[RMDB]
RNA sequence: GGGAACGACUCGAGUAGAGUCGAAAAGAAACGCACCAUUCCACCGACAACAGUGACGAACUUCGUGCAGGACAUGGUUGCACGAGCACGCUGGUGCCAUCCGAAUCUUGUCCCCUUCACCGGUGCCACCGCAUAAUGACUUCGGUCAUUAUGCGGUAAAAGAAACAACAACAACAAC
Reactivity to 2A3 in 0.01 (KOAc 150mM, MgCl2 10mM, bicine 150mM(pH8.5), 24C), signal-to-noise 8, nucleotides 027 to 126: g050a010a080a000c040g000c010a030c000c010a020u090u040c020c010a060c010c030g070a040c040a190a020c020a090g050u040g170a100c050g070a130a080c050u080u050c040g010u030g000c010a020g030g100a100c060a140u240g170g000u050u040g020c000a000c000g000a010g010c040a010c080g030c040u060g040g010u030g040c000c010a060u070c030c030g050a070a060u060c020u060u100g040u050c010c000c000c000u040u070c040a030c040c010g030g000u020g030c010c010
Reactivity to DMS in 0.01 (KOAc 150mM, MgCl2 10mM, bicine 150mM(pH8.5), 24C), signal-to-noise 4, nucleotides 027 to 126: g000a050a070a100c130g020c020a040c020c010a140u000u010c010c030a070c050c030g020a120c080a110a100c150a090g020u010g010a120c060g030a050a090c100u000u010c020g000u010g010c020a060g010g000a130c170a070u040g020g010u030u000g000c000a030c000g000a050g020c120a060c040g000c080u020g010g000u000g000c020c060a040u000c090c060g020a080a060u020c040u000u010g000u000c010c000c020c060u000u010c060a090c050c030g020g010u010g010c040c060